RNA sequence: GGGAACGACUCGAGUAGAGUCGAAAAUGUCCGUUCGCGGACAAAAAAGAUAUGGAUGUUGAACUACGUGUUGUGCAGCGAAGAACUUACAUCGGAAACGAUGUAAGGGAGCUGCCAACACGCAACAUCCUAAGUCAAAAAGCACGUUCGCGUGCAAGUUGUUACUACCUUUCGAGGUAGUAACAACAAAAGAAACAACAACAACAAC
Reactivity to 2A3 in 0.01 (KOAc 150mM, MgCl2 10mM, bicine 150mM(pH8.5), 24C), signal-to-noise 5, nucleotides 027 to 156: u070g000u000c030c010g020u050u070c300g010c070g000g000a070c000a040a130a000a030a010a020g010a000u020a010u020g000g000a010u010g010u010u000g030a090a060c100u160a060c300g000u030g030u010u010g080u100g010c000a000g020c010g130a300a020g000a020a000c000u000u000a000c000a000u000c000g010g010a000a010a000c000g000a010u000g000u000a000a000g000g000g000a010g000c000u000g010c000c000a000a000c000a000c000g000c000a000a000c000a000u000c000c000u000a010a000g000u000c030a000a010a080a090a050g030c020a010c020g020u070u120c230g030c020g110u020g000c010a020a040
Reactivity to DMS in 0.01 (KOAc 150mM, MgCl2 10mM, bicine 150mM(pH8.5), 24C), signal-to-noise 1, nucleotides 027 to 156: u000g010u000c010c000g000u000u020c300g060c020g040g010a080c000a000a030a000a110a090a190g000a030u000a250u000g000g000a050u010g030u000u010g020a110a300c000u000a250c000g000u000g010u000u000g000u010g070c030a000g040c000g000a110a130g020a110a190c000u000u000a000c000a000u000c000g030g020a140a030a210c010g040a010u000g020u000a000a000g020g000g000a140g020c010u000g000c000c000a000a000c000a010c000g060c000a020a050c000a030u000c000c000u000a000a070g000u040c030a070a060a080a100a210g000c020a020c000g010u000u000c240g010c010g000u000g000c010a020a090
Structure probing data (2A3 and DMS) for a 207-nucleotide construct. The RNA was probed in 150 mM KOAc, 10 mM MgCl2 and 150 mM bicine (pH 8.5) at 24 C. Reactivities are given for positions 27 through 156.